[RMDB]
RNA sequence: GGGAACGACUCGAGUAGAGUCGAAAAGGGGUCCUAGCGCGAAACCGAAUAGUGAGCGACGAUCUAUACUGAAGCCUCCACGGUAUAGGGAGCUCACUUGUAUUUCGGGAGCUAGGACGGAGGCACCCAAACAACUGAACGUUCGCGUUCAGUUGAACCCUUGGGGUAAGUUCGCUUACCCCAAGGGAAAAGAAACAACAACAACAAC
Reactivity to 2A3 in 0.01 (KOAc 150mM, MgCl2 10mM, bicine 150mM(pH8.5), 24C), signal-to-noise 2, nucleotides 027 to 156: g000g000g090g000u000c000c010u000a000g000c040g030c090g220a210a070a080c020c010g000a010a030u030a050g000u010g000a000g020c010g210a300c000g000a020u000c000u010a000u000a000c010u030g050a090a040g030c010c000u000c000c000a000c010g000g050u000a000u000a000g030g010g000a000g010c000u020c000a010c000u000u010g000u030a070u010u070u070c020g000g010g020a030g000c000u000a000g010g000a000c010g000g000a000g000g000c030a030c010c000c000a020a080a040c000a000a000c000u000g000a000a000c000g020u060u080c220g020c010g200u000u000c030a000g000u000u000g000a010a030
Chemical mapping of a 207-nucleotide RNA with 2A3. The reactions ran in a buffer of 150 mM KOAc, 10 mM MgCl2 and 150 mM bicine (pH 8.5), at 24 C.